[RMDB]
RNA sequence: GGGAACGACUCGAGUAGAGUCGAAAAAGCUCGGUCUACGGACCGAGCAAGGCAAUGAUGAAGCCUUCCGCACCUGAACGGUGAGGAGUGGACGGCUUCCUGAGCACAUGCGGCUACGGCCGCAUGAGAGGGCAACCAACUUCGGUUGGUUGCCCUCAAAAGAAACAACAACAACAAC
Reactivity to 2A3 in 0.01 (KOAc 150mM, MgCl2 10mM, bicine 150mM(pH8.5), 24C), signal-to-noise 1, nucleotides 027 to 126: a060g000c000u000c020g000g020u030c050u120a190c220g170g000a000c000c000g000a010g000c000a000a000g020g060c040a000a300u140g010a020u020g040a000a000g000c000c000u000u000c000c000g010c000a000c000c000u170g110a290a060c140g140g030u240g080a040g000g140a000g010u150g000g000a110c050g000g000c000u000u030c050c000u210g000a080g010c020a020c000a010u000g000c000g040g000c000u000a000c130g020g000c000c000g000c000a000u020g030a030